RNA sequence: GGGAACGACUCGAGUAGAGUCGAAAAGCGAUCAUGUAGACCAGCAGGGUCGCGAUGCCAAUCACAAUGCCGGCCACCGCCAGGCCGUAGCCUUCUUCGCGUGUCUGCUUGAUCUGGUUGAUGGCGAACGCUAAGCAUGGUUCGCCAUGCUUAGCGUAAAAGAAACAACAACAACAAC
Reactivity to 2A3 in 0.01 (KOAc 150mM, MgCl2 10mM, bicine 150mM(pH8.5), 24C), signal-to-noise 4, nucleotides 027 to 126: g000c010g010a010u030c000a000u080g190u300a020g040a040c020c000a010g000c010a010g010g020g080u030c000g010c010g000a010u050g080c080c050a070a090u180c040a060c030a160a090u110g020c000c010g020g000c000c020a100c070c080g110c020c030a030g010g010c010c020g030u050a020g010c020c030u060u020c000u050u030c020g010c020g050u050g300u040c020u020g010c010u010u110g050a160u030c010u050g230g000u040u030g030a040u030g080g010c030g040a050
Reactivity to DMS in 0.01 (KOAc 150mM, MgCl2 10mM, bicine 150mM(pH8.5), 24C), signal-to-noise 5, nucleotides 027 to 126: g000c010g010a010u000c010a030u000g020u010a030g000a060c050c060a090g000c010a030g010g020g030u010c030g020c000g000a050u010g010c170c130a100a100u010c170a080c170a070a050u010g010c050c020g010g000c010c020a090c120c080g000c090c080a080g010g010c010c010g000u000a050g000c020c120u000u000c050u010u000c050g000c050g020u000g000u000c010u000g010c010u000u010g010a040u000c030u000g000g010u000u000g010a040u000g010g010c000g000a090
An RNA of 177 nucleotides, treated with 2A3 and DMS and read out base by base. Values cover nucleotides 27 to 126. It was measured as part of the RMDB library OK2TRN. 2A3 adducts were read by reverse transcription with SuperScript II with manganese.